[RMDB]
RNA sequence: GGGAACGACUCGAGUAGAGUCGAAAAAGUCUCUGGCUUUCGUGAGGUUAUGCCUCAGGAGAGGAGACACUUCUCCUUUUCAUUCGUUAAACAGAAAUGAUAUUUGCCACCUUUUCUUCUCUAAGGCCUAAAGAGAUGACAGAAUGCUGCUGGUCCAGCAUAUGGGGUAGUUCGCUACCCCAUAUGCAAAAGAAACAACAACAACAAC
Reactivity to 2A3 in 0.01 (KOAc 150mM, MgCl2 10mM, bicine 150mM(pH8.5), 24C), signal-to-noise 4, nucleotides 027 to 156: a000g000u000c000u000c020u030g230g050c030u060u150u190c140g200u080g020a020g000g050u190u140a180u300g130c000c000u000c000a000g000g010a000g000a010g010g010a020g000a000c010a020c020u090u040c000u040c020c000u120u230u020u050c010a020u000u070c020g090u120u180a110a150a100c080a080g090a050a070a040u040g040a050u050a090u160u180u090g050c050c010a040c020c000u030u070u020u060c020u010u010c020u010c020u030a070a030g040g020c000c030u050a100a090a010g040a020g020a020u040g020a010c010a050g120a070a020u150g030c010u070g000c010u050g000g030u050c060c000a020
Reactivity to DMS in 0.01 (KOAc 150mM, MgCl2 10mM, bicine 150mM(pH8.5), 24C), signal-to-noise 1, nucleotides 027 to 156: a080g040u010c010u000c000u020g020g000c010u000u000u000c010g020u000g010a020g030g010u000u000a110u030g000c040c020u000c000a040g000g000a030g020a300g010g020a080g000a070c060a110c200u000u000c030u010c030c040u000u000u050u000c010a130u000u000c050g010u000u000a060a090a260c090a100g000a060a030a050u000g000a130u000a140u020u020u000g020c000c000a050c030c010u000u000u000u000c000u020u000c000u000c070u000a100a120g030g010c040c040u000a000a040a080g010a030g010a030u000g020a070c060a100g000a030a160u000g030c000u000g020c020u000g000g000u000c050c000a280

About this RNA:
The data come from the RNA Mapping Database (RMDB), library OK3TST. This 207-nucleotide RNA was probed chemically with 2A3 and DMS. The 2A3 profile rests on 2,000 reads. The DMS profile rests on 2,172 reads.